[RMDB]
RNA sequence: GGGAACGACUCGAGUAGAGUCGAAAAGAUAUGGAGUAGAGAACGUCCUUAUGGCGUUGAAAUCGGAAACGAUGGAGCCAUUAGGACGACUACUCCUAAGUCAAAGUAAGCAGUUCGCUGCUUACAACGUCCCAAUAACGUUCGCGUUAUUGGGACGAAAAGAAACAACAACAACAAC
Reactivity to 2A3 in 0.01 (KOAc 150mM, MgCl2 10mM, bicine 150mM(pH8.5), 24C), signal-to-noise 1, nucleotides 027 to 126: g040a010u070a030u160g000g000a010g010u020a010g010a030g070a300a080c000g020u000c010c000u030u030a010u020g020g020c020g210u260u030g000a010a040a000u000c010g000g090a040a030a070c000g010a000u020g040g040a000g030c050c000a010u000u020a000g000g020a000c000g000a000c010u000a000c010u000c010c010u050a130a020g000u020c040a070a080a030g000u010a000a000g000c000a010g000u030u170c300g070c180u000g000c000u000u000a010c020a010a010
Reactivity to DMS in 0.01 (KOAc 150mM, MgCl2 10mM, bicine 150mM(pH8.5), 24C), signal-to-noise 1, nucleotides 027 to 126: g020a020u000a300u000g000g000a000g030u000a040g000a090g040a090a120c020g000u000c000c000u000u000a000u000g020g000c000g050u000u050g000a050a050a010u000c010g000g000a100a100a170c000g010a000u000g000g000a180g030c000c000a010u000u000a010g020g000a000c000g000a010c000u000a020c000u000c000c000u000a000a110g000u020c030a130a090a160g020u000a000a000g040c000a000g000u000u000c250g010c000u000g000c000u000u000a000c000a090a130

Source: RMDB library TTRDEL, as collected in RNAgym. Chemical mapping of a 177-nucleotide RNA with 2A3 and DMS. For DMS the reverse transcriptase was MarathonRT.